RNA sequence: GGGAACGACUCGAGUAGAGUCGAAAAAGGGGACGAGUGAGGCUUAUCCCGGGGAACCCGGCGAAUCGUCCCCACAUAGCAGCUCCCGGACCCCCUUCCAAAGAGACCGGGGGGGAGUUUGGAGCGCAAACGUCGACCUUCGGGUCGACGAAAAGAAACAACAACAACAAC
Reactivity to DMS in 0.01 (KOAc 150mM, MgCl2 10mM, bicine 150mM(pH8.5), 24C), signal-to-noise 2, nucleotides 027 to 129: a030g100g010g000g000a000c000g040a060g070u080g040a170g000g030c070u020u000a090u070c280c000c010g040g030g000g020a280a080c100c010c000g040g000c050g020a010a180u000c000g020u020c000c000c030c050a010c100a030u040a030g030c120a150g040c010u050c010c000c100g000g030a030c050c080c100c030c040u000u000c020c000a140a100a120g030a130g000a000c300c190g000g000g000g000g000g000g000a010g050u000u070u050g000g000a010g020c030g040c030a080a090a080
Reactivity to 2A3 in 0.01 (KOAc 150mM, MgCl2 10mM, bicine 150mM(pH8.5), 24C), signal-to-noise 2, nucleotides 027 to 129: a000g000g000g000g000a020c000g000a070g010u220g010a030g050g030c030u110u040a040u120c020c000c040g000g010g000g070a060a070c020c070c060g080g000c050g060a070a100u010c000g010u010c000c000c050c000a020c020a000u030a020g020c070a000g000c010u020c000c010c000g000g000a000c000c030c000c020c000u050u090c130c000a070a130a050g200a030g020a060c030c040g000g000g000g000g000g000g000a070g000u000u000u000g000g000a000g000c000g000c000a010a010a020